[RMDB]
RNA sequence: GGGAACGACUCGAGUAGAGUCGAAAAAGCACGGGAUGUUCUACGACGAGCGUUGUCGAUGGGGCGGCCACUCGGCUGGGAUAUUGACGAGGUUAUCGCCGCGCGAACGCUGCUGUCGGCAAUAAGAGCCAUUAAUGGGGUUCGCCCCAUUAAUGGCAAAAGAAACAACAACAACAAC
Reactivity to 2A3 in 0.01 (KOAc 150mM, MgCl2 10mM, bicine 150mM(pH8.5), 24C), signal-to-noise 1, nucleotides 027 to 126: a000g080c030a040c080g000g090g060a050u080g040u070u000c020u170a040c000g040a010c000g040a000g000c040g030u030u010g140u100c030g020a180u100g010g050g070g000c000g020g030c010c030a100c010u020c000g000g000c060u010g000g100g010a060u060a060u230u160g040a030c050g000a020g000g030u070u070a050u100c030g000c000c000g170c020g010c000g010a020a000c010g000c020u070g100c030u100g000u030c010g020g040c000a050a000u130a120a060g050a020
Reactivity to DMS in 0.01 (KOAc 150mM, MgCl2 10mM, bicine 150mM(pH8.5), 24C), signal-to-noise 2, nucleotides 027 to 126: a050g030c050a070c040g000g000g020a150u010g030u000u010c050u000a060c030g000a060c020g000a070g030c040g040u010u000g010u010c000g020a100u000g000g010g020g010c030g000g010c050c270a100c020u000c040g010g000c000u000g020g000g010a250u020a150u000u010g000a040c040g010a080g010g000u010u010a150u000c090g000c000c010g000c030g010c040g030a030a040c090g000c020u000g010c030u000g040u000c010g020g000c090a030a060u010a040a100g010a170

The record gives the reactivity of an RNA of 177 nucleotides to 2A3 and DMS. Conditions: 150 mM KOAc, 10 mM MgCl2 and 150 mM bicine (pH 8.5), 24 C. 2A3 adducts were read by reverse transcription with SuperScript II with manganese. DMS adducts were read by reverse transcription with MarathonRT. The 2A3 profile rests on 952 reads.